The record gives the reactivity of an RNA of 177 nucleotides to 2A3. For 2A3 the reverse transcriptase was SuperScript II with manganese. Values cover nucleotides 27 to 126. Source: RMDB library OK1LIB, as collected in RNAgym.

RNA sequence: GGGAACGACUCGAGUAGAGUCGAAAAAUAUCAUAUCCACCGUCUUCCGCCUCACACUCCCUGCGCACUCAUGUGCCAAUGAGAACAGCAGUAACCGCUCGAGGGGGUUGAGGGUCUGAUGCGAGAGCCCAGCGCACUCAUUCGUGAGUGCGCUGGGAAAAGAAACAACAACAACAAC
Reactivity to 2A3 in 0.01 (KOAc 150mM, MgCl2 10mM, bicine 150mM(pH8.5), 24C), signal-to-noise 1, nucleotides 027 to 126: a000u300a050u020c030a000u000a040u000c030c030a030c060c000g000u000c000u090u000c010c000g050c000c000u000c000a000c000a040c000u090c010c010c010u080g060c060g000c090a010c000u090c010a120u120g070u050g190c040c010a080a020u000g040a000g040a200a030c110a170g010c000a000g000u010a020a050c050c050g000c100u020c030g160a090g100g100g000g000g010u000u000g030a010g000g000g000u100c090u080g000a000u030g010c030g000a130g000a010g020
About this RNA: The RNA was probed in 150 mM KOAc, 10 mM MgCl2 and 150 mM bicine (pH 8.5) at 24 C.